[RMDB]
RNA sequence: GGGAACGACUCGAGUAGAGUCGAAAAGCGCACUCUGUGUCACAUCGAUAUAUCCAGCCUCAUGUGAUGACAAUUUGUAAGCUUGCUAGAAUAAGGGGGAGCUUCGCUUAUCCAUGCGGCAACUAUCGUAAUGGUAAAACUUCGGUUUUACCAUUACAAAAGAAACAACAACAACAAC
Reactivity to DMS in 0.01 (KOAc 150mM, MgCl2 10mM, bicine 150mM(pH8.5), 24C), signal-to-noise 5, nucleotides 027 to 126: g020c090g010c080a060c040u010c050u020g010u020g000u000c040a060c100a060u000c100g010a080u000a100u000a080u000c090c070a130g010c030c030u000c010a020u000g000u010g000a020u000g000a030c080a080a090u010u000u020g010u010a020a050g010c000u000u010g010c030u000a180g020a090a110u020a080a120g010g000g010g000g000a040g010c030u000u010c070g000c130u000u010a050u000c030c010a040u000g020c120g010g020c030a080a070c120u010a040u000c150
Reactivity to 2A3 in 0.01 (KOAc 150mM, MgCl2 10mM, bicine 150mM(pH8.5), 24C), signal-to-noise 7, nucleotides 027 to 126: g040c030g000c030a030c020u150c090u110g040u020g030u080c020a030c010a120u120c060g060a010u020a010u010a040u170c040c020a010g010c000c000u010c000a010u020g120u150g030a010u010g010a020c030a100a150u060u070u260g100u140a020a010g000c000u030u140g090c030u070a070g110a300a240u270a240a170g050g000g010g000g000a000g000c000u030u030c030g010c040u010u020a010u000c000c000a010u020g000c010g010g000c020a030a030c040u060a050u120c030
Source information
Structure probing data (DMS and 2A3) for a 177-nucleotide construct. For 2A3 the reverse transcriptase was SuperScript II with manganese. Conditions: 150 mM KOAc, 10 mM MgCl2 and 150 mM bicine (pH 8.5), 24 C.